[RMDB]
RNA sequence: GGGAACGACUCGAGUAGAGUCGAAAACGCUGGGAACACGCUAGAGCCUACCAAUGGACGUAAGUACCUGAAGCGCGCACGGGUAUAUCGUCCAUUGGUAGGAACUACUCUAGAUGUGUUCCUGUGCUGAAGCGCGCACGGCAACCGAAAGGUGCGAGAUACAAGCUAACUUCGGUUAGCUUGUAUCAAAAGAAACAACAACAACAAC
Reactivity to DMS in 0.01 (KOAc 150mM, MgCl2 10mM, bicine 150mM(pH8.5), 24C), signal-to-noise 1, nucleotides 027 to 156: c070g010c000u000g030g030g010a010a070c000a000c000g070c010u000a020g000a050g000c010c020u000a050c010c040a030a050u000g000g000a030c010g040u000a080a300g020u000a000c000c010u030g000a090a050g040c010g030c020g030c000a300c040g000g000g050u000a040u000a120u000c030g000u000c020c000a000u000u000g020g010u000a030g040g030a010a050c010u000a160c020u000c060u010a010g000a100u030g070u020g000u010u000c010c000u010g000u010g000c110u010g010a070a050g040c040g030c030g060c000a240c030g000g000c070a100a100c010c020g000a140a070a230g010g000u000g030c030g030a240
Reactivity to 2A3 in 0.01 (KOAc 150mM, MgCl2 10mM, bicine 150mM(pH8.5), 24C), signal-to-noise 2, nucleotides 027 to 156: c040g000c040u080g000g000g000a000a000c000a010c020g010c010u010a010g000a030g120c000c000u000a000c000c000a000a000u010g000g000a000c000g070u130a100a300g020u000a020c000c010u060g080a270a060g030c040g010c020g010c060a030c030g010g000g000u050a030u040a020u170c060g000u000c000c000a000u000u010g000g010u080a120g000g000a000a000c010u170a000c000u000c000u000a000g010a100u020g000u000g000u000u000c000c000u000g000u010g000c020u080g020a110a050g010c010g010c000g000c020a010c030g030g000c000a050a060c000c030g060a090a020a040g010g000u000g000c000g000a050